[RMDB]
RNA sequence: GGGAACGACUCGAGUAGAGUCGAAAAGUCCAGGGUUUCCCGUGUCCUAUUCGACCUGCGAUGGCCUGAUAUUGUAGGGGACAAUGGACGUCAGUGCAACAGCAGGUCGGGGGCCCUUCGCGGUGGAUCUUUAUACAUGUUUCGGCGUGUAUGAGGGAAAAGAAACAACAACAACAAC
Reactivity to DMS in 0.01 (KOAc 150mM, MgCl2 10mM, bicine 150mM(pH8.5), 24C), signal-to-noise 9, nucleotides 027 to 126: g020u000c020c020a070g000g000g010u000u010u010c030c000c010g010u010g010u010c010c000u000a120u030u030c010g010a030c000c000u000g000c000g000a190u020g000g000c000c000u000g000a030u010a050u010u010g010u010a120g010g010g010g010a300c060a060a050u020g010g010a090c160g000u000c010a010g000u050g010c010a060a060c090a300g010c010a010g000g010u000c010g000g000g000g000g000c080c050c030u000u010c050g010c050g000g000u010g000g000a010
Reactivity to 2A3 in 0.01 (KOAc 150mM, MgCl2 10mM, bicine 150mM(pH8.5), 24C), signal-to-noise 9, nucleotides 027 to 126: g040u000c000c000a010g040g020g010u010u030u060c000c000c000g010u030g020u010c010c010u040a080u070u120c000g000a000c000c000u000g000c010g120a150u050g020g000c000c000u000g000a000u030a040u060u050g020u030a060g000g050g010g010a020c010a010a040u090g070g100a050c050g010u000c000a020g010u030g300c040a130a070c000a090g030c000a000g010g000u000c000g000g000g000g000g000c000c020c000u040u060c050g000c020g000g020u030g010g010a010